[RMDB]
RNA sequence: GGGAACGACUCGAGUAGAGUCGAAAAAGUACUGGCAUACGUGCCAGUACAAUAUGUGGUGUCUGGCAGUGUUUCAGAUGGCGACAUAACCUAAAUUGAGGUACGAGUAUAUUACGAUAUACUCGAACUCCAACAAACAUUUCGAUGUUUGUUGGAGAAAAGAAACAACAACAACAAC
Reactivity to DMS in 0.01 (KOAc 150mM, MgCl2 10mM, bicine 150mM(pH8.5), 24C), signal-to-noise 4, nucleotides 027 to 126: a110g020u000a000c000u010g030g020c000a030u000a110c190g030u000g020c010c000a000g020u000a000c000a060a060u000a030u000g020u000g000g050u010g000u000c000u000g000g000c090a220g000u020g030u050u020u000c010a020g010a030u000g010g060c000g000a020c030a010u010a040a200c020c010u000a050a090a130u020u020g000a050g010g030u000a130c030g000a030g000u000a000u000a000u010u000a130c220g020a050u000a000u000a000c010u000c000g010a050a070
Reactivity to 2A3 in 0.01 (KOAc 150mM, MgCl2 10mM, bicine 150mM(pH8.5), 24C), signal-to-noise 9, nucleotides 027 to 126: a000g010u000a000c000u000g000g000c000a020u010a070c240g080u030g000c000c000a000g000u000a000c000a000a000u070a020u020g030u020g140g070u010g000u010c000u020g020g000c060a180g210u040g040u300u140u030c000a010g000a010u030g160g060c020g040a010c000a020u030a050a060c000c010u070a130a180a230u130u220g090a080g050g100u140a050c000g000a000g010u000a000u000a000u020u060a050c250g000a010u000a000u000a010c000u000c000g000a000a010